[RMDB]
RNA sequence: GGGAACGACUCGAGUAGAGUCGAAAAGCUUCUGUUAUAAGACUACAUUAGUUAAACUGAACACAAGAUCAUUCUGAGCCAUUUUGUAUACAGUAUCUGCCACAAGUCUGAUCUGUCUUAAUCCACAAUCGCUCAUGUGAUUCGUCACAUGAGCGAUAAAAGAAACAACAACAACAAC
Reactivity to 2A3 in 0.01 (KOAc 150mM, MgCl2 10mM, bicine 150mM(pH8.5), 24C), signal-to-noise 1, nucleotides 027 to 126: g050c090u040u020c030u070g050u050u080a170u040a110a080g040a010c010u080a030c070a100u080u020a010g000u000u040a030a090a000c080u060g030a100a010c040a000c030a040a140g020a030u040c000a020u150u150c060u100g010a010g040c050c020a060u030u010u010u060g000u010a050u060a120c010a000g050u050a070u070c030u140g020c000c000a000c030a170a000g000u000c000u020g000a040u080c010u030g020u000c010u050u090a110a020u100c080c000a070c030a010
Reactivity to DMS in 0.01 (KOAc 150mM, MgCl2 10mM, bicine 150mM(pH8.5), 24C), signal-to-noise 2, nucleotides 027 to 126: g020c030u010u000c030u000g000u000u010a090u010a100a160g000a060c050u000a050c110a060u000u000a050g010u000u000a040a090a090c060u000g000a080a090c130a060c020a060a020g000a040u000c030a090u000u000c070u000g000a130g020c070c090a080u010u000u000u000g000u010a100u000a090c050a010g000u000a090u000c050u000g000c040c050a130c080a050a030g000u000c010u000g020a070u000c110u010g000u010c040u000u000a060a070u000c080c060a040c190a060
The record gives the reactivity of an RNA of 177 nucleotides to 2A3 and DMS. The DMS profile rests on 1,052 reads. For DMS the reverse transcriptase was MarathonRT. The reactions ran in a buffer of 150 mM KOAc, 10 mM MgCl2 and 150 mM bicine (pH 8.5), at 24 C. For 2A3 the reverse transcriptase was SuperScript II with manganese. As a SHAPE reagent, 2A3 marks flexible, mostly unpaired nucleotides at the ribose 2'-OH. The 2A3 profile rests on 776 reads.